The data come from the RNA Mapping Database (RMDB), library OK2TRN.
An RNA of 177 nucleotides, treated with DMS and 2A3 and read out base by base.
In probing experiments dimethyl sulfate is read out at A N1 and C N3, which are open when not base-paired.
The reactions ran in a buffer of 150 mM KOAc, 10 mM MgCl2 and 150 mM bicine (pH 8.5), at 24 C.
2A3 adducts were read by reverse transcription with SuperScript II with manganese.
The 2A3 profile rests on 1,192 reads.
RNA sequence: GGGAACGACUCGAGUAGAGUCGAAAAACUGCUGUACAAUAGUGCGCUGCAAUGUUACAUCAGCACAGUAGGAUUGUGGCCUUGCUUUGUGUGGUCUCGUGCUGGUAUUCUAUAUUCCUUUGAUGGGAGGUCAAAUGGGAUUCGUCCCAUUUGACCUAAAAGAAACAACAACAACAAC
Reactivity to DMS in 0.01 (KOAc 150mM, MgCl2 10mM, bicine 150mM(pH8.5), 24C), signal-to-noise 2, nucleotides 027 to 126: a120c070u010g020c020u000g000u000a030c060a060a060u010a040g030u000g030c210g030c020u000g010c040a040a030u000g000u000u020a030c050a100u000c050a030g000c030a050c040a220g000u010a040g000g010a040u000u000g030u000g010g000c000c160u000u000g000c030u000u000u000g000u010g010u000g000g020u000c130u000c160g010u000g000c000u000g010g000u010a050u000u000c040u000a080u010a160u010u010c010c010u000u000u020g010a090u010g010g000g000
Reactivity to 2A3 in 0.01 (KOAc 150mM, MgCl2 10mM, bicine 150mM(pH8.5), 24C), signal-to-noise 2, nucleotides 027 to 126: a010c020u050g000c010u000g000u030a020c000a080a080u120a150g030u040g190c080g000c050u040g000c060a000a050u090g280u230u040a000c000a010u100c010a030g020c030a010c000a050g030u050a020g020g080a020u010u070g040u010g050g000c040c130u190u200g000c000u100u050u000g010u050g000u020g050g070u020c080u030c120g000u010g020c000u010g010g040u050a130u090u030c040u050a090u020a040u100u140c020c000u090u000u120g220a260u240g030g050g050